Structure probing data (DMS and 2A3) for a 177-nucleotide construct. For 2A3, 24,531 sequencing reads were counted. Conditions: 150 mM KOAc, 10 mM MgCl2 and 150 mM bicine (pH 8.5), 24 C.
RNA sequence: GGGAACGACUCGAGUAGAGUCGAAAAGAUGGUACGAUCGCUGGUACAUCUGCGUGGUACGCGCGGCCCGGCCGCGAGUGAUCGUACCGUACGGUACUGAUAGACUGGCCGCGCGGCCGCUGCGCGGACAGGGUGAACUGUUCGCAGUUCACCCUGUAAAAGAAACAACAACAACAAC
Reactivity to DMS in 0.01 (KOAc 150mM, MgCl2 10mM, bicine 150mM(pH8.5), 24C), signal-to-noise 9, nucleotides 027 to 126: g000a060u010g020g020u000a010c020g010a040u000c060g020c080u010g020g010u000a050c080a070u010c030u000g010c080g030u000g010g010u000a050c020g010c040g020c000g010g000c030c090c130g020g010c010c010g020c120g010a040g020u000g000a030u000c010g010u000a000c000c000g010u000a010c120g010g010u000a060c050u010g010a080u010a110g010a100c060u000g000g010c010c010g000c010g010c010g010g000c080c060g000c030u000g010c010g010c060g000g000
Reactivity to 2A3 in 0.01 (KOAc 150mM, MgCl2 10mM, bicine 150mM(pH8.5), 24C), signal-to-noise 8, nucleotides 027 to 126: g070a030u160g000g050u030a010c010g010a060u050c020g010c100u120g100g050u100a050c020a090u040c040u060g050c050g060u100g020g040u060a080c020g000c010g000c010g020g010c050c120c000g090g020c030c030g050c070g030a040g020u060g020a010u010c010g000u000a000c000c000g000u030a040c050g010g010u030a060c030u160g060a120u060a100g150a070c050u050g050g000c010c000g000c000g000c000g000g010c050c050g000c030u030g000c010g000c000g000g010